[RMDB]
RNA sequence: GGGAACGACUCGAGUAGAGUCGAAAAGGUGCGAAUCACUGUUUGGUCUAAUCCUAGACAUUCUGUGUUCUAUGAGGCAUUCUCAUAAAGCCAAGCCGCGCUACGAUCAGGUGCGUUGCGCCUGUUAAGUGUCUGUACCAUUCGUGGUGCAGGCGCUAAAAGAAACAACAACAACAAC
Reactivity to 2A3 in 0.01 (KOAc 150mM, MgCl2 10mM, bicine 150mM(pH8.5), 24C), signal-to-noise 9, nucleotides 027 to 126: g030g000u030g010c020g020a040a030u130c010a010c020u030g050u030u030u050g110g010u000c010u020a040a070u060c020c050u020a010g010a010c010a020u070u030c040u100g050u010g030u080u040c050u050a060u080g030a050g050g050c150a180u300u040c020u000c010a030u070a040a060a010g020c010c010a020a010g020c010c010g010c010g000c010u060a040c040g070a060u080c020a020g000g010u010g010c070g060u050u110g010c000g000c000c000u010g030u040u080a070
Reactivity to DMS in 0.01 (KOAc 150mM, MgCl2 10mM, bicine 150mM(pH8.5), 24C), signal-to-noise 9, nucleotides 027 to 126: g000g020u000g010c030g010a100a060u030c040a040c040u010g010u010u010u010g010g010u010c030u000a060a110u030c130c110u000a040g000a040c030a050u010u010c050u010g010u010g010u010u010c050u010a030u010g000a040g000g010c240a120u020u030c000u000c020a040u010a020a070a090g010c040c000a070a090g010c070c010g000c050g010c020u000a070c150g010a080u030c030a030g000g010u000g000c060g010u010u010g000c020g010c020c000u000g000u010u010a050